Structure probing data (2A3 and DMS) for a 177-nucleotide construct. For DMS the reverse transcriptase was MarathonRT. The data come from the RNA Mapping Database (RMDB), library OK2TRN. The reactions ran in a buffer of 150 mM KOAc, 10 mM MgCl2 and 150 mM bicine (pH 8.5), at 24 C.
RNA sequence: GGGAACGACUCGAGUAGAGUCGAAAACGAUGGACAUGUGUGGAGGGAGGUGAGGAGUGUCCCCUCAGUUCAUACCGCUGGGGACUCUGGGCAGAAGGUGGCCCUGGAUGGCUGGGGAGAUGUCGAGCAGCCAGAAACUAUUCGUAGUUUCUGGCUGAAAAGAAACAACAACAACAAC
Reactivity to 2A3 in 0.01 (KOAc 150mM, MgCl2 10mM, bicine 150mM(pH8.5), 24C), signal-to-noise 2, nucleotides 027 to 126: c040g060a050u100g060g040a030c040a140u110g070u010g040u120g100g130a220g050g010g010a110g010g070u130g030a040g050g000a020g050u060g030u010c010c000c000c000u050c000a030g020u110u150c020a020u140a280c000c060g010c080u000g000g000g000g000a000c010u010c010u000g010g040g000c030a020g040a150a020g120g080u100g040g010c000c000c050u080g080g020a150u110g030g000c090u040g030g000g010g010a120g020a030u040g000u040c010g020a030g040
Reactivity to DMS in 0.01 (KOAc 150mM, MgCl2 10mM, bicine 150mM(pH8.5), 24C), signal-to-noise 2, nucleotides 027 to 126: c130g020a120u020g010g000a070c080a070u000g020u010g020u010g000g000a150g010g000g000a120g000g000u020g000a100g000g000a120g000u000g000u000c010c010c000c010u010c040a040g020u000u000c160a090u000a100c070c080g010c200u010g010g000g000g020a040c020u000c040u000g030g030g000c070a090g010a110a080g010g020u000g000g010c010c000c020u000g000g000a120u000g020g000c060u000g000g000g000g000a100g010a080u000g000u000c040g010a150g010